[RMDB]
RNA sequence: GGGAACGACUCGAGUAGAGUCGAAAAUCUCCAGCCACUGUUUCUCGCGCUGGUGUUGUAUUCAUCAAUGAAUCCGACCUUGGUUGGGGGCCCUUCAAGGACAAGUGGAUAGCAUCAAGGGACAGACGCUAGUGGCAGUAUUCGUACUGCCACUAGCAAAAGAAACAACAACAACAAC
Reactivity to DMS in 0.01 (KOAc 150mM, MgCl2 10mM, bicine 150mM(pH8.5), 24C), signal-to-noise 1, nucleotides 027 to 126: u010c020u000c020c020a050g020c030c030a060c120u000g030u010u000u000c030u000c080g010c170g000c100u030g010g000u000g010u010u010g000u010a080u000u000c030a060u000c210a140a100u010g000a100a070u030c050c020g010a100c030c030u010u000g000g000u000u000g040g000g020g010g000c040c030c050u000u000c130a090a090g000g010a050c090a040a140g000u000g000g000a030u000a060g000c040a040u010c050a030a150g000g000g000a080c140a070g010a100c110
Reactivity to 2A3 in 0.01 (KOAc 150mM, MgCl2 10mM, bicine 150mM(pH8.5), 24C), signal-to-noise 1, nucleotides 027 to 126: u000c000u010c000c000a000g010c000c000a070c010u030g020u060u060u000c060u050c070g100c010g020c070u000g030g070u070g050u050u060g060u050a100u010u070c110a180u030c030a070a240u140g020a050a030u000c040c020g060a070c000c010u030u050g020g050u010u070g060g050g000g010g050c000c000c000u020u070c040a060a010g040g030a070c030a100a000g050u020g040g070a050u030a100g050c000a000u010c060a070a060g030g010g060a040c030a050g110a080c080